RNA sequence: GGGAACGACUCGAGUAGAGUCGAAAAGAUAUGGAGGAUAGUUGGGAGCCUCCACUCGGAAACGAGUGGUAGGCAUCGAUCAACGUCCUCCUAAGUCAAAAUCACUGGUGGUUCGCCACCAGUGAAAGAAUUAUGAUCGGUUCGCCGAUCAUAAUUCAAAAGAAACAACAACAACAAC
Reactivity to DMS in 0.01 (KOAc 150mM, MgCl2 10mM, bicine 150mM(pH8.5), 24C), signal-to-noise 2, nucleotides 027 to 126: g000a010u000a100u010g000g010a000g020g010a010u000a040g030u000u010g000g030g010a180g020c000c000u000c000c000a000c000u000c000g030g000a020a040a060c000g010a010g050u000g000g000u020a000g010g040c010a060u010c300g020a180u000c010a010a010c000g000u000c010c000u000c000c010u000a000a070g000u000c010a130a120a190a110u000c000a000c010u010g010g020u000g000g010u000u010c300g000c010c000a000c000c000a000g010u010g000a000a050a080
Reactivity to 2A3 in 0.01 (KOAc 150mM, MgCl2 10mM, bicine 150mM(pH8.5), 24C), signal-to-noise 2, nucleotides 027 to 126: g000a000u040a010u050g000g000a010g020g010a040u170a300g160u010u000g090g050g050a120g000c000c000u010c000c010a000c000u000c020g000g030a020a030a020c000g000a000g000u010g020g060u160a020g000g000c020a010u150c080g030a100u020c000a000a000c010g010u010c000c010u000c000c010u010a000a000g000u000c010a040a010a020a280u060c010a000c010u010g000g010u000g010g060u060u090c280g120c160c010a010c030c000a010g010u000g000a000a000a000
Notes:
An RNA of 177 nucleotides, treated with DMS and 2A3 and read out base by base. 2A3 adducts were read by reverse transcription with SuperScript II with manganese. For DMS the reverse transcriptase was MarathonRT. The DMS profile rests on 2,751 reads. DMS (dimethyl sulfate) methylates the pairing face of unpaired adenines and cytosines.